Chemical mapping of a 177-nucleotide RNA with DMS. Conditions: 150 mM KOAc, 10 mM MgCl2 and 150 mM bicine (pH 8.5), 24 C. The data come from the RNA Mapping Database (RMDB), library TTRDES. DMS adducts were read by reverse transcription with MarathonRT.

RNA sequence: GGGAACGACUCGAGUAGAGUCGAAAAAGCAUGAUAUGGAGUGACCCAGUCUGUGAUGCCAGCGUUGAAAGUAAUUCGGAAACGAAUUACUGGAGCUGGUGCAUGGCUGCACUCCUAAGUCCGAAAACCCUUUUGCUAGGUUCGCCUAGCAAAAGGGAAAAGAAACAACAACAACAAC
Reactivity to DMS in 0.01 (KOAc 150mM, MgCl2 10mM, bicine 150mM(pH8.5), 24C), signal-to-noise 1, nucleotides 027 to 126: a080g020c220a080u010g000a160u010a300u000g000g000a000g010u000g000a280c170c300c130a010g030u010c000u030g000u000g000a100u010g010c010c000a000g010c020g000u020u010g000a090a110a020g000u010a000a040u000u000c000g010g010a120a060a200c010g030a010a000u000u000a000c000u000g000g000a010g030c010u000g000g000u020g030c030a000u000g010g030c000u000g000c010a020c000u040c000c010u000a020a050g000u000c010c180g030a080a090a150a140